About this RNA
Structure probing data (2A3 and DMS) for a 177-nucleotide construct. For DMS the reverse transcriptase was MarathonRT. For DMS, 865 sequencing reads were counted.
RNA sequence: GGGAACGACUCGAGUAGAGUCGAAAACUGCCGAGGGCGACGCGGCUGAACUGCCAGUUCACUUCCGGCAGGUCGGAAGCAGGGAAGGAGAGCACGAUCUGCUUUGAUGUCACGGGGCCGCGGAAGAAGGCACCGAUCCAUUCGUGGAUCGGUGCCUAAAAGAAACAACAACAACAAC
Reactivity to 2A3 in 0.01 (KOAc 150mM, MgCl2 10mM, bicine 150mM(pH8.5), 24C), signal-to-noise 1, nucleotides 027 to 126: c070u090g000c020c010g060a090g120g010g000c030g030a020c000g010c020g000g050c020u040g030a030a040c030u120g080c000c090a030g000u050u030c010a020c050u110u030c040c010g000g030c040a020g000g020u000c000g020g030a120a010g010c000a010g050g080g090a110a040g090g100a170g030a010g110c010a000c120g030a000u030c010u030g000c010u060u050u080g040a090u080g030u150c040a050c150g120g010g000g000c000c030g000c010g010g010a030a100g040a020
Reactivity to DMS in 0.01 (KOAc 150mM, MgCl2 10mM, bicine 150mM(pH8.5), 24C), signal-to-noise 1, nucleotides 027 to 126: c080u010g010c020c030g010a030g000g000g000c090g050a150c070g040c150g030g020c010u010g000a040a050c160u020g040c100c060a170g010u010u000c110a110c080u000u000c010c120g010g000c010a000g010g020u010c020g020g020a050a010g020c040a110g000g010g020a270a090g000g000a210g010a100g000c030a080c050g000a140u010c040u010g010c000u000u030u030g010a140u000g010u000c060a080c040g000g020g000g000c030c010g000c040g010g030a080a120g010a080
For 2A3, 1,181 sequencing reads were counted. Reactivities are given for positions 27 through 126.